[RMDB]
RNA sequence: GGGAACGACUCGAGUAGAGUCGAAAAUGCCUGCUGGUGUUGGCCAAUGCCCGGAGCAGGCCCUCUUUCCAUCCCCUGUCGGAUGAGCUGGUCAACUAUGUCAACAAACGGAAUACCACGUGGCAGGAUUCAAUAUCUUCUUCGGAAGAUAUUGAAUAAAAGAAACAACAACAACAAC
Reactivity to 2A3 in 0.01 (KOAc 150mM, MgCl2 10mM, bicine 150mM(pH8.5), 24C), signal-to-noise 5, nucleotides 027 to 126: u060g000c000c000u010g000c010u040g030g280u060g080u210u140g040g010c030c060a180a140u300g030c030c040c020g020g020a020g020c000a010g020g010c030c020c020u100c000u040u060u000c020c000a050u030c020c000c000c000u040g050u080c020g000g040a040u020g030a080g010c060u030g010g000u030c010a020a030c060u080a080u180g110u060c050a060a020c020a080a230a030c070g030g020a070a010u050a130c000c010a020c060g010u020g010g010c010a010g020g020
Reactivity to DMS in 0.01 (KOAc 150mM, MgCl2 10mM, bicine 150mM(pH8.5), 24C), signal-to-noise 7, nucleotides 027 to 126: u000g010c000c000u000g020c010u000g010g040u000g020u010u000g030g010c020c160a110a180u010g010c020c010c070g010g000a070g020c020a030g010g000c010c100c040u000c070u000u000u000c030c020a090u000c040c040c010c040u010g010u000c050g010g010a090u000g000a100g010c080u010g010g010u000c060a050a130c060u000a100u010g010u000c070a060a090c140a040a090a110c110g000g000a110a130u010a150c030c020a050c060g010u010g000g010c020a030g000g000

Chemical mapping of a 177-nucleotide RNA with 2A3 and DMS. 2A3 adducts were read by reverse transcription with SuperScript II with manganese. The 2A3 profile rests on 7,318 reads. Conditions: 150 mM KOAc, 10 mM MgCl2 and 150 mM bicine (pH 8.5), 24 C. DMS adducts were read by reverse transcription with MarathonRT. The data come from the RNA Mapping Database (RMDB), library OK2TRN.